[RMDB]
RNA sequence: GGGAACGACUCGAGUAGAGUCGAAAAGAUAUGGAUCGUGGAAUGAAGGUUGGCGUAGGACAUGACGCUUAUCGGAAACGAUAAACGUCAACAGCCUACGCCAACCUUCAUUCCUCGAUCCUAAGUCCUAAGACAUAAGCUUCGGCUUAUGUCUUAGAAAAGAAACAACAACAACAAC
Reactivity to DMS in 0.01 (KOAc 150mM, MgCl2 10mM, bicine 150mM(pH8.5), 24C), signal-to-noise 3, nucleotides 027 to 126: g000a100u010a300u010g010g010a000u000c000g010u010g010g000a020a000u000g010a030a000g000g010u000u000g000g000c010g000u000a000g000g000a070c150a300u010g000a020c000g020c020u000u000a010u000c000g000g000a160a100a230c000g020a020u000a000a000a010c010g000u000c000a020a060c300a250g000c020c000u000a000c000g000c000c000a000a000c000c000u000u020c010a000u000u000c010c000u000c000g000a010u000c000c000u000a010a090g000u000c050
Source: RMDB library TTRINS, as collected in RNAgym. Chemical mapping of a 177-nucleotide RNA with DMS. The RNA was probed in 150 mM KOAc, 10 mM MgCl2 and 150 mM bicine (pH 8.5) at 24 C. Values cover nucleotides 27 to 126. For DMS, 5,133 sequencing reads were counted.